[RMDB]
RNA sequence: GGGAACGACUCGAGUAGAGUCGAAAAAAAAAAGAUAUGGAGCAGAGGGAGGUCCUGAAGGAACAAUGUAGUCGGAAACGACUAUGAUUCCUCAGGACCGACGAUCUCUGCUCCUAAGUCAAAAAAAGAAGGUAUUAUGGUUCGCCAUAAUACCUUCAAAAGAAACAACAACAACAAC
Reactivity to DMS in 0.01 (KOAc 150mM, MgCl2 10mM, bicine 150mM(pH8.5), 24C), signal-to-noise 1, nucleotides 027 to 126: a020a050a000a050a020a130g020a040u000a300u000g030g020a010g010c010a000g000a030g010g010g020a020g010g000u000c000c000u000g040a140a020g040g000a030a020c080a100a030u030g000u000a010g000u000c010g010g000a160a080a180c000g010a000c000u000a010u030g000a140u000u000c000c000u000c010a000g000g000a010c030c020g000a000c210g020a020u010c020u000c010u000g000c000u000c010c010u010a000a040g030u010c000a020a020a070a130a050a100a080
The record gives the reactivity of an RNA of 177 nucleotides to DMS. The reactions ran in a buffer of 150 mM KOAc, 10 mM MgCl2 and 150 mM bicine (pH 8.5), at 24 C. Reactivities are given for positions 27 through 126.